[RMDB]
RNA sequence: GGGAACGACUCGAGUAGAGUCGAAAAACGAAACGUCGGACACCUUGUACGUGGUGUCGGGAUCCGGUGCCGGGGUCCAGGUCAUCGAACACGCGGCGGGCACCCGAUGAGCAGCCGACCCGCGGCGCAAAGCUUUAACGUUCGCGUUAAAGCUUUGAAAAGAAACAACAACAACAAC
Reactivity to 2A3 in 0.01 (KOAc 150mM, MgCl2 10mM, bicine 150mM(pH8.5), 24C), signal-to-noise 3, nucleotides 027 to 126: a000c060g020a080a030a020c050g060u030c030g110g010a010c010a020c030c030u070u160g180u210a070c060g030u060g050g010u030g020u020c000g000g010g010a050u040c040c040g070g020u070g030c020c020g030g010g000g000u010c010c010a020g040g070u030c020a070u070c080g080a140a020c050a000c130g020c010g090g000c000g020g060g000c020a040c020c010c000g030a040u050g030a020g090c070a020g070c030c020g010a030c000c000c000g140c000g040g000c020g010
Reactivity to DMS in 0.01 (KOAc 150mM, MgCl2 10mM, bicine 150mM(pH8.5), 24C), signal-to-noise 6, nucleotides 027 to 126: a100c090g010a080a080a110c100g000u000c020g010g010a040c020a030c010c010u000u000g030u010a090c190g020u010g010g020u000g010u000c010g000g000g000a080u000c040c070g010g020u000g010c010c020g010g010g010g010u000c010c020a140g010g000u010c030a050u010c040g000a080a090c120a090c090g000c070g010g010c040g010g000g000c060a100c090c060c020g010a030u000g010a070g010c080a140g010c090c090g000a040c010c010c000g020c020g010g010c030g010